[RMDB]
RNA sequence: GGGAACGACUCGAGUAGAGUCGAAAACAGCCUGCCCGCGGCGGACGCCGUGGGCGUCGCAGGGGUCGGGGUCGCGGUGGUCCCGGGGCCGCCGAUGGUUUGUCGGACCCCCGCCGGCGUGCCCCCAGACACCGCGGUUGUUCGCAACCGCGGUGUCAAAAGAAACAACAACAACAAC
Reactivity to 2A3 in 0.01 (KOAc 150mM, MgCl2 10mM, bicine 150mM(pH8.5), 24C), signal-to-noise 1, nucleotides 027 to 126: c020a000g090c020c010u030g000c000c000c000g000c010g020g020c070g130g200a210c300g000c010c000g030u050g010g000g000c000g000u000c000g000c050a050g030g020g000g000u060c120g000g000g000g010u060c000g000c030g020g290u000g020g060u060c040c110c190g080g030g000g000c060c030g020c000c000g010a060u080g020g140u000u070u210g300u120c070g120g070a120c000c000c010c000c010g000c000c060g070g020c000g030u030g010c000c000c000c020c000a000